[RMDB]
RNA sequence: GGGAACGACUCGAGUAGAGUCGAAAAGACACACCUUCAGGGCAGUAGCACAGGAGAGAUGUCUGUGCUGAUUUUUAUGCAAUCCUUUCUGGAAGUGAUGCCACCUUAGAAGCUGCAACUUAGAGAGAGCUUGUUACUAGUUCGCUAGUAACAAGCUAAAAGAAACAACAACAACAAC
Reactivity to DMS in 0.01 (KOAc 150mM, MgCl2 10mM, bicine 150mM(pH8.5), 24C), signal-to-noise 3, nucleotides 027 to 126: g000a100c040a090c050a040c030c020u000u000c040a060g000g010g030c080a090g020u010a030g010c010a010c010a010g020g010a030g020a180g000a110u010g010u000c000u000g010u010g000c010u010g000a010u000u000u000u000u000a080u030g000c060a080a080u000c060c080u010u000u010c050u020g000g010a050a040g010u000g000a100u000g010c000c040a090c030c020u010u010a060g010a070a060g020c040u000g000c070a070a100c070u000u000a090g030a140g000a160g010
Reactivity to 2A3 in 0.01 (KOAc 150mM, MgCl2 10mM, bicine 150mM(pH8.5), 24C), signal-to-noise 2, nucleotides 027 to 126: g030a000c000a000c010a040c060c000u060u030c030a010g080g020g000c020a020g060u100a000g000c010a000c010a010g000g030a080g000a000g010a060u270g060u040c000u010g010u000g000c000u010g010a030u000u080u080u060u160a110u120g030c030a030a110u060c020c000u050u160u120c080u050g050g010a070a020g010u030g050a020u040g010c030c030a060c020c000u070u090a060g040a120a040g080c020u000g040c010a070a090c020u090u150a030g010a000g010a010g000
An RNA of 177 nucleotides, treated with DMS and 2A3 and read out base by base.
2A3 adducts were read by reverse transcription with SuperScript II with manganese.
The DMS profile rests on 3,052 reads.
Source: RMDB library OK2TRN, as collected in RNAgym.